[RMDB]
The data come from the RNA Mapping Database (RMDB), library ARCHII. Chemical mapping of a 207-nucleotide RNA with 2A3.
RNA sequence: GGGAACGACUCGAGUAGAGUCGAAAAAUCAAGUGAAUCGCCGUAACGGAGCGUGUUCGUCCGCGACGUCACGGUUAAAUCAAAUGACAGAACUAAACAUGUAGAACUGGUCGUGGACCGCUUCUGGACGCGGGUUCGAUUCCCGCCGCCUCCACCAGCCUAUCUUAGGGUUCGCCCUAAGAUAGGCAAAAGAAACAACAACAACAAC
Reactivity to 2A3 in 0.01 (KOAc 150mM, MgCl2 10mM, bicine 150mM(pH8.5), 24C), signal-to-noise 1, nucleotides 027 to 156: a000u120c060a060a000g020u010g100a060a090u100c030g020c010c000g000u030a040a000c010g000g000a000g010c060g060u070g000u060u150c070g000u000c000c000g000c000g000a000c000g000u030c060a000c000g000g010u020u080a000a040a030u080c050a000a020a060u170g000a000c020a010g000a060a040c090u170a060a150a040c060a110u080g010u110a000g050a130a010c130u090g080g020u110c040g110u040g030g000a000c010c020g000c000u060u080c000u140g010g030a000c010g000c030g030g000g010u120u090c000g000a000u100u040c000c000c000g000c000c020g030c000c020u010c000c000a070c030c010a000
The reactions ran in a buffer of 150 mM KOAc, 10 mM MgCl2 and 150 mM bicine (pH 8.5), at 24 C.